[RMDB]
RNA sequence: GGGAACGACUCGAGUAGAGUCGAAAACCAAUUCAUUCGUGAAUUGGGCAUGUCCUAAGUCAUUGGGAGGGUACGCGAAGAACGUGGUCGGAAACGACCACGGGAGCGUACACCUUUGAUCAAUGAUAUGGAAGGUAGUUACUUUUCGAAGUAACAAGUGAGUGUUAUCAUUCGUGAUAACACUCACAAAAGAAACAACAACAACAAC
Reactivity to 2A3 in 0.01 (KOAc 150mM, MgCl2 10mM, bicine 150mM(pH8.5), 24C), signal-to-noise 5, nucleotides 027 to 156: c010c000a010a010u000u010c010a010u040u100c190g200u030g040a010a000u010u010g020g030g000c080a150u230g100u020c000c000u070a140a060g030u000c010a010u000u010g010g020g000a010g000g000g010u010a000c010g030c010g070a270a060g020a060a020c000g000u000g010g000u000c000g010g040a040a060a130c000g000a000c000c000a000c000g000g000g000a010g000c010g020u010a000c000a210c000c000u140u140u060g020a040u070c000a010a000u010g010a010u020a070u080g080g040a050a080g130g050u150a060g010u060u010a000c000u080u040u090u150c230g080a070a000g000u000a000a010c030a060a070
Reactivity to DMS in 0.01 (KOAc 150mM, MgCl2 10mM, bicine 150mM(pH8.5), 24C), signal-to-noise 2, nucleotides 027 to 156: c010c000a030a010u000u000c010a120u000u000c300g080u010g010a010a020u000u000g000g020g000c010a080u010g020u000c010c020u000a040a260g010u000c000a010u020u020g000g000g010a030g070g010g040u000a010c000g030c000g010a130a220g000a120a220c010g040u010g010g010u010c010g040g000a110a130a300c000g010a060c000c000a010c010g020g000g000a200g010c000g000u010a010c010a040c000c000u000u000u010g010a130u000c010a050a000u000g000a030u000a300u000g000g010a120a110g020g000u000a170g000u000u000a020c010u000u010u020u000c290g010a020a020g020u000a010a010c000a110a150

An RNA of 207 nucleotides, treated with 2A3 and DMS and read out base by base. Values are in units of 0.01, from 0 to 300, in steps of 10. The RNA was probed in 150 mM KOAc, 10 mM MgCl2 and 150 mM bicine (pH 8.5) at 24 C. The data come from the RNA Mapping Database (RMDB), library RNAMAK. For 2A3 the reverse transcriptase was SuperScript II with manganese. For DMS, 4,684 sequencing reads were counted.